[RMDB]
RNA sequence: GGGAACGACUCGAGUAGAGUCGAAAAGAUAUGGAGCGUUAAGGGACAUGAUUAGUCCCUGUUCGUAGUGGUCGGAAACGACCGUCUACGAACAGGGACUAAUCAACAGCCCUGACGCUCCUAAGUCCCUAUGUUUAGUGUUCGCACUAAACAUAGGAAAAGAAACAACAACAACAAC
Reactivity to 2A3 in 0.01 (KOAc 150mM, MgCl2 10mM, bicine 150mM(pH8.5), 24C), signal-to-noise 1, nucleotides 027 to 126: g070a020u120a070u300g010g000a010g000c040g010u030u090a300a130g040g000g010a010c070a210u060g000a030u000u010a010g010u030c000c020c000u010g000u010u000c000g000u000a010g020u010g040g000u030c020g030g000a160a070a150c020g020a020c000c010g020u000c000u000a000c000g000a000a000c000a000g000g000g010a010c000u000a000a000u000c000a000a010c010a020g020c000c000c010u000g000a000c010g000c000u020c000c010u000a000a000g010u020c000
Reactivity to DMS in 0.01 (KOAc 150mM, MgCl2 10mM, bicine 150mM(pH8.5), 24C), signal-to-noise 4, nucleotides 027 to 126: g000a120u000a290u010g010g000a010g020c010g010u000u000a040a030g000g000g010a050c100a260u010g000a000u000u000a000g010u000c000c010c000u000g010u000u000c000g030u010a000g050u010g000g000u000c000g030g000a150a110a250c000g000a000c000c000g000u000c000u000a010c000g000a010a000c000a000g000g000g020a010c010u000a000a000u000c000a020a040c290a170g010c000c000c000u000g010a000c000g010c000u000c000c000u000a010a080g000u000c040
Structure probing data (2A3 and DMS) for a 177-nucleotide construct. For 2A3 the reverse transcriptase was SuperScript II with manganese. Source: RMDB library TTRINS, as collected in RNAgym. For DMS the reverse transcriptase was MarathonRT. The RNA was probed in 150 mM KOAc, 10 mM MgCl2 and 150 mM bicine (pH 8.5) at 24 C. The DMS profile rests on 7,591 reads.